[RMDB]
An RNA of 207 nucleotides, treated with 2A3 and DMS and read out base by base. The data come from the RNA Mapping Database (RMDB), library OK3TST. The 2A3 profile rests on 1,500 reads. Conditions: 150 mM KOAc, 10 mM MgCl2 and 150 mM bicine (pH 8.5), 24 C.
RNA sequence: GGGAACGACUCGAGUAGAGUCGAAAAGGUUUUAGUGACGCAAGUGAGCCUCUCGGACUUCGAGAGUGCCGACGCCGGCGUCGACGAGGACGACCUCGAGCAACUGACCGAGGCCGAGCGCGAAGUGUACGAGAGUACCGUUCUCGGCGAGUACGGCGAAACGUAAUCCAUUCGUGGAUUACGUUUCAAAAGAAACAACAACAACAAC
Reactivity to 2A3 in 0.01 (KOAc 150mM, MgCl2 10mM, bicine 150mM(pH8.5), 24C), signal-to-noise 3, nucleotides 027 to 156: g080g010u010u020u060u110a070g020u080g020a050c070g020c050a040a100g010u040g030a070g010c050c010u000c000u000c020g270g130a300c140u220u160c130g000a000g000a000g050u170g020c000c010g020a020c060g000c000c010g070g030c030g060u000c000g010a000c000g020a010g000g000a030c070g030a040c030c000u020c020g040a050g010c060a040a110c060u100g030a110c030c020g000a040g040g040c030c050g020a030g010c020g000c010g060a060a130g050u060g020u120a020c000g010a020g010a000g120u000a050c060c000g000u000u000c010u000c000g000g000c010g000a030g000u080a080c040g000g010c030
Reactivity to DMS in 0.01 (KOAc 150mM, MgCl2 10mM, bicine 150mM(pH8.5), 24C), signal-to-noise 2, nucleotides 027 to 156: g010g000u000u000u000u000a090g020u000g010a040c000g030c040a070a050g020u000g000a160g020c010c000u000c010u000c010g010g000a190c260u000u000c010g020a010g000a050g030u010g010c010c000g020a090c040g010c000c040g010g070c030g010u000c010g030a060c040g010a150g030g020a090c070g000a070c070c010u000c010g010a080g000c050a140a100c110u000g000a130c040c050g000a080g040g020c010c010g020a060g020c060g030c020g000a130a090g020u000g040u000a080c010g030a260g010a290g000u000a060c010c020g000u000u000c010u000c020g010g010c000g020a060g010u000a060c040g010g040c110